This 177-nucleotide RNA was probed chemically with DMS and 2A3. Reactivities are given for positions 27 through 126. For DMS the reverse transcriptase was MarathonRT.

RNA sequence: GGGAACGACUCGAGUAGAGUCGAAAAUGUCAUUGGGAUUUUAAUAGGAAUUGCACUGAAUCUGUAGAUCCCUUUCAGUAGUAUCGUCAUUGUGACAGUGGUAAAUCUUCCCAGCCAUGAACAUGGGAGCCUUAGAGAGUUUCGACUCUCUAAGGCUAAAAGAAACAACAACAACAAC
Reactivity to DMS in 0.01 (KOAc 150mM, MgCl2 10mM, bicine 150mM(pH8.5), 24C), signal-to-noise 3, nucleotides 027 to 126: u000g020u010c030a030u000u000g000g020g000a070u000u010u010u010a060a160u000a150g000g010a070a100u010u010g010c070a070c080u000g020a070a070u000c090u000g010u010a110g010a050u010c010c020c010u000u000u010c080a070g010u010a060g000u010a060u010c070g020u010c030a120u000u000g010u010g010a070c040a070g020u000g000g040u010a030a090a060u000c150u000u000c000c010c020a160g020c030c020a010u000g000a070a060c150a080u010g000g000g030
Reactivity to 2A3 in 0.01 (KOAc 150mM, MgCl2 10mM, bicine 150mM(pH8.5), 24C), signal-to-noise 1, nucleotides 027 to 126: u150g020u000c010a030u020u100g060g010g010a030u010u080u090u110a160a150u120a050g080g040a100a040u070u100g080c100a060c110u020g030a050a090u030c010u000g080u020a030g010a090u080c010c010c000u000u030u000c040a030g010u020a050g000u050a100u130c030g090u010c050a020u090u190g060u020g070a030c010a000g030u020g030g060u130a040a100a150u020c010u020u040c020c010c000a000g000c000c000a040u100g080a030a100c040a060u000g000g090g000
For DMS, 2,324 sequencing reads were counted.